[RMDB]
RNA sequence: GGGAACGACUCGAGUAGAGUCGAAAAAAUUUUUUCGGUCUCGUCAGACUAAUCAGUGACAUGAUGGUCAUAGCGAAAGCACACGCACGAAAUGUCACUGAUGAAAAAGUGCGUGUGACCAAUUUAACAGACUAAUACUGUUCGCAGUAUUAGUCUGAAAAGAAACAACAACAACAAC
Reactivity to 2A3 in 0.01 (KOAc 150mM, MgCl2 10mM, bicine 150mM(pH8.5), 24C), signal-to-noise 4, nucleotides 027 to 126: a000a000u170u110u010u010u040u090c040g030g000u010c000u010c020g140u140c100a020g020a030c010u050a040a030u010c010a000g000u000g010a010c030a040u160g050a130u100g110g020u060c040a110u280a060g040c030g050a100a020a010g000c000a010c000a000c030g010c000a010c050g080a160a110a040u030g000u000c000a000c010u000g000a010u000g000a010a030a020a020a020g010u020g000c000g000u010g030u020g020a020c000c000a040a060u140u160u050a070a030
Reactivity to DMS in 0.01 (KOAc 150mM, MgCl2 10mM, bicine 150mM(pH8.5), 24C), signal-to-noise 6, nucleotides 027 to 126: a090a040u020u010u000u000u010u010c050g020g010u000c000u010c210g010u010c130a080g000a050c030u000a130a030u000c000a010g010u000g000a010c010a090u010g010a140u000g010g000u000c010a050u010a090g010c010g000a110a050a120g010c010a100c040a010c010g000c000a020c040g010a090a070a050u000g000u000c010a010c010u000g000a020u000g000a060a030a050a070a080g010u000g000c010g020u000g010u000g000a020c010c020a050a090u010u000u000a060a190